[RMDB]
RNA sequence: GGGAACGACUCGAGUAGAGUCGAAAAGUUCGCAUGGUGCACUAUUGUGUUAUUAGUAACUAAGUAAGCUUACAAUCGGAAAUGUUUAACCAUAAAAGGGUAAAAUGGUGUAAGACAGUCUGAUACUUUACGGCUUCACGUUUCGACGUGAAGCCAAGCUGGUAUAUAGAUUCGUCUAUAUACCAGCAAAAGAAACAACAACAACAAC
Reactivity to DMS in 0.01 (KOAc 150mM, MgCl2 10mM, bicine 150mM(pH8.5), 24C), signal-to-noise 2, nucleotides 027 to 156: g020u000u000c040g020c050a240u010g020g040u000g000c070a040c040u000a070u000u000g050u000g020u020u000a040u000u000a110g070u000a040a080c060u000a060a150g020u010a060a100g010c040u010u000a010c030a170a090u000c030g030g000a090a040a100u000g010u010u000u000a100a060c050c020a050u010a040a080a130a130g010g020g000u000a030a050a090a080u010g010g020u000g010u000a060a060g020a030c050a090g010u000c010u000g010a090u000a040c020u000u000u010a110c150g010g000c000u010u000c010a000c000g020u000u000u020c180g020a160c000g040u000g010a050a000g000c010c000a010a040
Reactivity to 2A3 in 0.01 (KOAc 150mM, MgCl2 10mM, bicine 150mM(pH8.5), 24C), signal-to-noise 4, nucleotides 027 to 156: g050u070u100c040g020c090a060u110g030g000u060g020c020a020c030u110a090u150u160g040u010g010u040u040a070u040u030a050g050u040a060a010c030u010a110a040g080u030a140a020g070c030u110u120a060c090a080a100u030c020g000g020a060a090a010u010g030u020u080u040a030a020c010c000a010u070a090a220a040a050g080g000g020u050a020a040a030a040u040g020g000u040g040u080a030a020g020a020c010a010g030u010c010u020g010a020u040a220c070u060u060u080a060c120g000g000c000u010u010c010a000c000g020u020u050u090c190g070a030c000g000u000g000a000a000g000c010c000a000a000

The record gives the reactivity of an RNA of 207 nucleotides to DMS and 2A3.
The DMS profile rests on 3,046 reads.